[RMDB]
RNA sequence: GGGAACGACUCGAGUAGAGUCGAAAAGGGAGACCCGAGCAGAGGCAUAGCGAACUGCGCACGGAGAAGCCUUGAGGGAAUGCCGUAGGACCCGGGUUCGAUUCCCGGCAGCUCCACCGAAGGGCCAACUAUAUAGCGUCUUCGGACGCUAUAUAGUAAAAGAAACAACAACAACAAC
Reactivity to 2A3 in 0.01 (KOAc 150mM, MgCl2 10mM, bicine 150mM(pH8.5), 24C), signal-to-noise 6, nucleotides 027 to 126: g040g020g000a070g010a040c000c000c010g010a040g000c030a020g030a050g060g010c030a060u130a090g090c070g060a090a050c050u060g020c040g060c030a040c050g070g040a110g030a100a020g030c000c010u050u060g020a070g020g010g030a040a050u100g030c010c020g030u070a080g000g080a030c000c000c020g010g000g000u050u090c060g030a110u060u060c000c000c000g010g000c000a030g000c010u010c010c010a060c010c020g040a030a030g020g000g000c010c010a010
Reactivity to DMS in 0.01 (KOAc 150mM, MgCl2 10mM, bicine 150mM(pH8.5), 24C), signal-to-noise 6, nucleotides 027 to 126: g000g010g000a090g010a170c030c000c010g010a150g020c070a050g010a060g010g010c040a110u020a110g010c040g010a130a140c070u010g000c030g000c090a160c120g000g000a070g010a120a250g000c010c020u010u010g000a240g010g010g000a060a050u000g010c020c050g000u030a110g000g000a060c090c020c010g000g000g000u010u010c130g000a240u030u000c010c000c000g000g010c140a050g000c080u000c030c030a140c030c030g010a150a050g000g000g010c000c100a130